Conditions: 150 mM KOAc, 10 mM MgCl2 and 150 mM bicine (pH 8.5), 24 C. An RNA of 207 nucleotides, treated with 2A3 and read out base by base. For 2A3 the reverse transcriptase was SuperScript II with manganese. The 2A3 profile rests on 947 reads. Source: RMDB library OK3TST, as collected in RNAgym.

RNA sequence: GGGAACGACUCGAGUAGAGUCGAAAAAGUCCCAGCUACUCAGGAGGCUGAGGUGGGAAGCUUGCGUGAGCUCAGGAGUUGGAGGCUGCAGUGAGCUGUGAUUGUGCCACUGCCCUCCAGUCUGGGUGACAGAGAAAGAUCCUGUCUCAAAAAACCAAGUAUACGAGGAGUUCGCUCCUCGUAUACUAAAAGAAACAACAACAACAAC
Reactivity to 2A3 in 0.01 (KOAc 150mM, MgCl2 10mM, bicine 150mM(pH8.5), 24C), signal-to-noise 2, nucleotides 027 to 156: a020g070u060c010c020c010a060g060c060u080a040c030u050c130a030g040g040a070g090g000c010u010g030a000g000g010u040g000g010g010a110a060g040c020u070u040g070c040g060u100g040a020g000c010u000c030a060g010g050a140g090u110u080g030g000a000g010g020c090u130g010c100a010g000u030g020a140g050c040u060g020u090g100a290u300u160g030u070g120c030c000a000c000u000g000c000c000c000u000c010c000a000g000u010c000u000g000g090g000u090g040a020c020a000g130a000g030a040a090a010g030a040u010c000c000u010g020u030c000u000c020a060a050a020a000a030a030c110c050a060